[RMDB]
RNA sequence: GGGAACGACUCGAGUAGAGUCGAAAAUCGUCUAAAAGAAGGCAUGGUCUUGACUGUUGAGCCAAUGAUUAAUACAGGAACUUGGGAAAUUGAUACCGACAUCAAGACAGGUUGGGCUCAUAAAACCGACCAAAAUGGUGUUCGCACCAUUUUGGUCAAAAGAAACAACAACAACAAC
Reactivity to DMS in 0.01 (KOAc 150mM, MgCl2 10mM, bicine 150mM(pH8.5), 24C), signal-to-noise 2, nucleotides 027 to 126: u000c100g000u020c050u050a050a000a070a070g020a150a090g010g040c090a100u100g000g000u040c000u000u000g020a050c200u010g050u000u000g000a150g030c060c010a000a100u000g020a150u030u070a050a160u010a050c140a100g010g000a060a070c110u010u060g000g000g000a060a060a090u000u020g000a100u090a250c120c090g060a010c050a050u000c020a010a000g020a010c040a090g000g000u000u000g000g000g000c000u000c050a050u030a020a110a120a100c140c130
Reactivity to 2A3 in 0.01 (KOAc 150mM, MgCl2 10mM, bicine 150mM(pH8.5), 24C), signal-to-noise 2, nucleotides 027 to 126: u130c040g030u030c020u040a090a190a000a090g160a000a050g090g000c100a100u200g050g020u090c040u080u060g010a090c200u070g070u050u000g020a020g020c000c000a000a010u130g120a140u150u200a170a200u100a100c090a040g300g000a090a080c010u000u010g150g070g000a150a110a190u060u120g010a030u210a250c020c060g040a040c030a010u040c000a000a000g060a000c030a000g000g110u000u010g010g130g060c020u010c050a000u070a000a040a000a030c000c090